[RMDB]
RNA sequence: GGGAACGACUCGAGUAGAGUCGAAAACUGUCUGAUACUAUGUGACUUUCUGAUUAUGUGAUUUUUAUGCAUUUUAUGUGUUUUGUAAACUAGCUGUAUUUUUGGUCCAUGUCUAGGUUGUAGAAUUGAAUUGUGCAUUUUGGCAUCUGAGCACAGAGAUAGGUGCUGAGUUCGCUCAGCACCUAUCAAAAGAAACAACAACAACAAC
Reactivity to 2A3 in 0.01 (KOAc 150mM, MgCl2 10mM, bicine 150mM(pH8.5), 24C), signal-to-noise 2, nucleotides 027 to 156: c030u060g030u070c030u070g120a110u040a230c070u060a120u080g070u070g110a150c000u030u120u050c040u020g020a070u000u160a080u150g040u020g100a180u030u040u060u040u110a050u050g020c020a030u040u080u150u100a100u080g100u000g050u060u000u050u200g010u080a030a070a100c010u010a010g080c030u010g040u080a140u100u140u020u040u110g030g020u020c040c040a060u040g010u040c040u020a040g030g100u020u030g060u010a030g040a050a010u070u090g000a060a050u110u040g060u000g050c000a030u040u000u080u200g090g000c000a030u000c060u110g030a030g000c050a010c000a060g110a000